[RMDB]
RNA sequence: GGGAACGACUCGAGUAGAGUCGAAAACGCGGCCGGCAGGGGCACAACGGAACUGGGGCCGGAGGUGUUCUUGACAGGUGCAGCCGGCGAAGCGAUCGACGCUGCUGCUGGCAACACCGAUAUAUUGGCAGGUGGAGCCGUUCGCGGUUCCACCUGCAAAAGAAACAACAACAACAAC
Reactivity to 2A3 in 0.01 (KOAc 150mM, MgCl2 10mM, bicine 150mM(pH8.5), 24C), signal-to-noise 2, nucleotides 027 to 126: c040g000c010g040g010c000c000g040g000c030a050g010g000g010g040c020a020c030a030a070c060g030g040a050a090c040u110g000g000g180g000c050c000g000g000a120g010g050u000g000u080u020c000u010u020g050a030c110a100g000g010u000g010c000a000g000c020c020g000g000c000g050a040a010g000c010g020a110u300c130g040a080c000g020c000u040g010c040u030g000c000u000g020g000c000a000a000c010a010c010c000g000a000u100a010u060a040u300u080g100
Reactivity to DMS in 0.01 (KOAc 150mM, MgCl2 10mM, bicine 150mM(pH8.5), 24C), signal-to-noise 2, nucleotides 027 to 126: c110g050c050g000g020c060c000g030g000c110a030g010g030g000g000c100a080c100a070a100c180g010g000a070a060c000u000g040g020g050g010c050c000g000g010a020g030g050u000g000u000u000c010u000u020g000a070c300a140g000g000u000g010c300a140g010c010c000g020g000c000g000a110a010g000c000g000a300u000c240g030a130c000g000c000u000g000c190u010g000c000u000g000g000c030a030a060c040a110c000c050g010a130u060a140u050a060u000u000g010